[RMDB]
RNA sequence: GGGAACGACUCGAGUAGAGUCGAAAAGAGUCUCGCUGUAGCCCAGGCUGGAUUGCAGUGGCGCCAUCUCGGCUAACUGUAACCUCCGCCUCCCGGGUUCAAGGAAUUCUCCUGCCUCAGCCUCCUGAUUCACCCUCUACUUCGGUAGAGGGUGAAUAAAAGAAACAACAACAACAAC
Reactivity to DMS in 0.01 (KOAc 150mM, MgCl2 10mM, bicine 150mM(pH8.5), 24C), signal-to-noise 1, nucleotides 027 to 126: g000a100g000u000c040u000c080g020c090u000g010u000a140g020c010c030c080a080g010g010c080u010g020g000a080u000u000g020c010a010g000u000g010g010c240g000c020c030a070u020c210u010c130g010g000c000u010a130a030c000u020g010u000a040a020c040c120u000c040c040g030c050c000u000c090c070c160g020g000g010u000u010c050a060a070g000g010a100a140u000u000c020u000c040c020u000g000c030c020u000c040a040g000c030c010u000c000c020u000g010